RNA sequence: GGGAACGACUCGAGUAGAGUCGAAAACAAGGACGGGAUUCUGCCUAUCAGGCAUGAACUAAGCGGUCGCGUAGCGGCCACCUCCCCAUUUAUUGCAAUUGCUUCGCAAUUGUAAAAAAGGUUAACUCAGGAAGAACGUGUUCGCACGUUCUUCCUGAAAAGAAACAACAACAACAAC
Reactivity to 2A3 in 0.01 (KOAc 150mM, MgCl2 10mM, bicine 150mM(pH8.5), 24C), signal-to-noise 2, nucleotides 027 to 126: c020a050a090g100g000a030c090g020g000g000a010u000u040c020u010g000c010c040u130a210u250c140a020g000g000c000a020u110g030a000a020c000u070a040a000g120c070g040g030u010c000g040c060g130u060a060g010c000g000g000c000c000a000c000c000u050c010c010c000c000a030u050u100u080a230u100u000g000c010a020a000u000u000g020c050u210u180c190g020c000a010a000u010u000g020u030a000a000a000a000a000a000g140g000u140u100a080a030c040u000